[RMDB]
RNA sequence: GGGAACGACUCGAGUAGAGUCGAAAACGUCGUGAACUAGCGACAAUGCCGUAGAUCUAUCGUUAUCUAACCGAAACAUCGUGACUAGUCGUAGAAUAGAACCAGGAGCGGCCGCUGGCAAACAAAGACGUUGUCUCAGAUUCGUCUGAGGCAACGUAAAAGAAACAACAACAACAAC
Reactivity to DMS in 0.01 (KOAc 150mM, MgCl2 10mM, bicine 150mM(pH8.5), 24C), signal-to-noise 6, nucleotides 027 to 126: c130g010u010c030g010u010g020a140a150c120u020a110g010c020g000a050c040a090a090u050g020c040c040g020u000a080g010a060u010c040u000a080u000c070g000u020u010a050u010c070u000a090a120c110c030g010a050a060a090c150a050u030c060g000u000g000a080c030u000a070g010u000c060g020u000a050g010a060a070u020a080g000a050a100c060c060a090g010g010a090g010c010g000g000c010c000g000c030u000g000g000c070a050a040a060c110a070a080a090g010
Reactivity to 2A3 in 0.01 (KOAc 150mM, MgCl2 10mM, bicine 150mM(pH8.5), 24C), signal-to-noise 7, nucleotides 027 to 126: c040g010u010c000g010u020g050a120a050c050u010a040g000c000g020a010c010a020a020u080g020c010c000g010u030a020g010a110u010c010u020a070u050c040g040u070u030a040u050c040u030a040a070c040c000g030a060a020a020c030a070u050c020g030u030g040a040c020u020a020g040u040c030g030u040a030g040a100a040u080a050g030a060a040c020c020a030g030g030a040g030c010g010g000c000c000g010c020u020g020g000c020a060a070a010c020a020a130a000g080